[RMDB]
RNA sequence: GGGAACGACUCGAGUAGAGUCGAAAAUCCAACUCCUGCUGGUGUGAAGAAGGAGCCGUUCCACGCAGGACGCGAACAAGAAGACGCCGAAGCAACUUCAGGUCGCCGCUCACGAACUGGCGCGCGAGGUACUAGUUUAGUUCGCUAAACUAGUACCAAAAGAAACAACAACAACAAC
Reactivity to DMS in 0.01 (KOAc 150mM, MgCl2 10mM, bicine 150mM(pH8.5), 24C), signal-to-noise 4, nucleotides 027 to 126: u000c010c010a170a180c130u000c010c010u000g020c030u000g010g030u000g020u000g020a070a090g010a140a080g000g010a070g010c020c030g000u010u000c000c010a050c090g010c050a060g020g010a060c100g000c040g010a050a040c080a080a070g000a060a060g000a080c130g000c010c030g010a080a080g020c060a060a090c050u000u000c030a060g000g000u010c030g030c010c030g000c020u010c070a080c080g000a050a130c090u010g010g010c030g020c110g020c050g010a070
Reactivity to 2A3 in 0.01 (KOAc 150mM, MgCl2 10mM, bicine 150mM(pH8.5), 24C), signal-to-noise 4, nucleotides 027 to 126: u030c000c000a030a030c030u020c020c000u010g030c020u090g050g040u060g080u120g120a090a140g050a060a040g080g050a030g000c020c020g030u030u010c020c000a040c080g030c010a030g030g050a020c060g030c020g050a070a020c030a100a050g120a020a020g060a040c020g000c030c030g050a070a010g060c030a040a090c010u090u060c050a030g070g030u020c030g000c010c020g010c010u120c020a070c050g070a190a070c050u050g020g000c010g000c020g010c030g030a040
The record gives the reactivity of an RNA of 177 nucleotides to DMS and 2A3. For DMS, 3,694 sequencing reads were counted. The reactions ran in a buffer of 150 mM KOAc, 10 mM MgCl2 and 150 mM bicine (pH 8.5), at 24 C. The data come from the RNA Mapping Database (RMDB), library VIROID. For DMS the reverse transcriptase was MarathonRT. For 2A3 the reverse transcriptase was SuperScript II with manganese.